[RMDB]
RNA sequence: GGGAACGACUCGAGUAGAGUCGAAAACUUUUGCAUACAAAGGUCUCCUGGGCUGGUUCUAAAAUCAUUGCUGUUAUCUACAGCGGCAGGGAGUCUCUAAUAUUCCCAUCGGGAACCUAUUACUGUGGUACUAUUUGGUUCGCCAAAUAGAAAAGAAACAACAACAACAAC
Reactivity to DMS in 0.01 (KOAc 150mM, MgCl2 10mM, bicine 150mM(pH8.5), 24C), signal-to-noise 9, nucleotides 027 to 129: c020u030u030u040u040g040c060a110u000a120c080a070a120a070g030g020u000c000u000c000c030u040g010g020g000c060u000g000g020u020u020c090u050a020a090a100a090u000c110a040u040u040g020c030u020g010u020u040a050u050c100u040a060c060a000g010c030g030g020c060a150g020g010g010a000g030u000c000u020c060u040a050a060u000a060u000u010c020c010c010a120u060c110g000g000g010a050a020c020c010u040a070u050u040a120c090u000g020u020g020g010u050a150
Reactivity to 2A3 in 0.01 (KOAc 150mM, MgCl2 10mM, bicine 150mM(pH8.5), 24C), signal-to-noise 9, nucleotides 027 to 129: c000u060u040u100u150g030c040a070u070a220c060a050a120a010g020g000u000c010u000c040c010u050g020g150g000c030u040g020g050u060u050c070u160a060a090a060a100u150c070a100u100u160g000c010u010g020u070u080a110u120c050u060a020c000a010g000c000g000g000c010a010g020g000g020a030g030u000c020u000c000u040a110a110u080a100u130u020c000c000c000a030u070c040g040g000g010a000a010c010c010u050a110u130u090a080c090u080g030u060g090g040u050a040
An RNA of 170 nucleotides, treated with DMS and 2A3 and read out base by base.
For DMS the reverse transcriptase was MarathonRT.
Conditions: 150 mM KOAc, 10 mM MgCl2 and 150 mM bicine (pH 8.5), 24 C.
For 2A3 the reverse transcriptase was SuperScript II with manganese.